This 207-nucleotide RNA was probed chemically with DMS and 2A3. Values cover nucleotides 27 to 156. Source: RMDB library M2RFPK, as collected in RNAgym. Conditions: 150 mM KOAc, 10 mM MgCl2 and 150 mM bicine (pH 8.5), 24 C.

RNA sequence: GGGAACGACUCGAGUAGAGUCGAAAACGGAAGCAUUAAAACCAUUCGAGCUAGUCAAUGCGUGGCGUGUCUCUCCGCAGCGUGUUGGCGAAUGUACAGAGUGACUAAGCAUGUAGUACCGAGGAUGAUAAGAGCAAUUCGUUCGCGAAUUGCUCAACGAUGAUUAAGAGUUCGCUCUUAAUCAUCGAAAAGAAACAACAACAACAAC
Reactivity to DMS in 0.01 (KOAc 150mM, MgCl2 10mM, bicine 150mM(pH8.5), 24C), signal-to-noise 3, nucleotides 027 to 156: c050g010g000a140a130g010c030a100u000u000a070a050a080a160c060c010a090u000u000c000g020a150g010c050u000a190g020u000c010a000a010u000g010c040g020u010g030g010c040g000u020g020u000c140u000c040u010c190c020g020c000a040g030c020g010u000g020u020u000g030g010c030g000a070a020u010g000u010a090c080a130g020a080g000u000g000a120c060u000a090a150g030c060a060u000g000u000a100g010u000a050c060c040g020a120g010g010a140u000g020a120u000a080a160g000a020g030c000a000a010u000u010c000g060u000u010c280g070c040g000a020a020u020u000g010c000u000c000a010a040
Reactivity to 2A3 in 0.01 (KOAc 150mM, MgCl2 10mM, bicine 150mM(pH8.5), 24C), signal-to-noise 7, nucleotides 027 to 156: c030g030g030a040a020g020c030a010u060u110a050a040a030a090c030c010a020u050u050c060g020a030g050c050u080a020g040u010c010a000a010u010g010c010g020u030g050g020c030g010u090g060u050c030u020c020u020c130c010g010c000a010g000c010g000u020g000u000u000g020g000c010g020a020a020u060g000u020a030c030a070g040a010g060u050g030a040c040u080a050a020g070c010a050u070g020u090a050g060u040a070c030c040g020a030g070g030a040u100g020a020u080a240a110g000a000g010c000a000a000u010u000c000g020u020u080c160g000c000g120a000a000u000u000g000c000u000c000a000a000
Notes
For 2A3, 8,389 sequencing reads were counted. In probing experiments dimethyl sulfate is read out at A N1 and C N3, which are open when not base-paired.